Conditions: 150 mM KOAc, 10 mM MgCl2 and 150 mM bicine (pH 8.5), 24 C. Structure probing data (2A3 and DMS) for a 177-nucleotide construct.

RNA sequence: GGGAACGACUCGAGUAGAGUCGAAAAGGCAAAUUGCGUUCUAAACUGGCAGGCUUGAGUGGGUCAGGGGUGUGUGGAACUUCCGGUGGAGCGGUGAAAUGUGUUGAUAUCGGAAGGAACGCCGGUGGUUCCACAACAAAUUCGUUUGUUGUGGAACAAAAGAAACAACAACAACAAC
Reactivity to 2A3 in 0.01 (KOAc 150mM, MgCl2 10mM, bicine 150mM(pH8.5), 24C), signal-to-noise 7, nucleotides 027 to 126: g050g020c050a060a100a100u130u140g010c040g020u050u040c050u150a100a110a110c050u050g050g000c030a020g020g040c030u100u150g030a030g030u080g020g000g000u060c050a050g030g010g030g000u080g030u070g000u040g040g030a040a020c000u010u000c010c000g020g000u020g000g010a010g000c010g020g010u070g040a060a070a070u120g030u020g060u300u030g010a020u010a000u030c000g010g000a000a020g030g020a070a000c020g010c020c010g030g020u090g060
Reactivity to DMS in 0.01 (KOAc 150mM, MgCl2 10mM, bicine 150mM(pH8.5), 24C), signal-to-noise 4, nucleotides 027 to 126: g020g010c050a050a070a160u020u010g000c040g030u010u010c070u000a070a100a100c100u010g000g000c030a100g000g000c060u010u010g010a110g030u010g000g010g000u000c070a080g010g000g000g010u000g000u020g020u010g000g000a080a070c020u000u000c000c000g020g010u000g000g000a050g000c020g000g000u000g010a070a080a140u050g010u010g030u000u010g020a100u020a020u000c010g020g000a040a030g000g000a040a060c080g000c010c030g000g010u010g010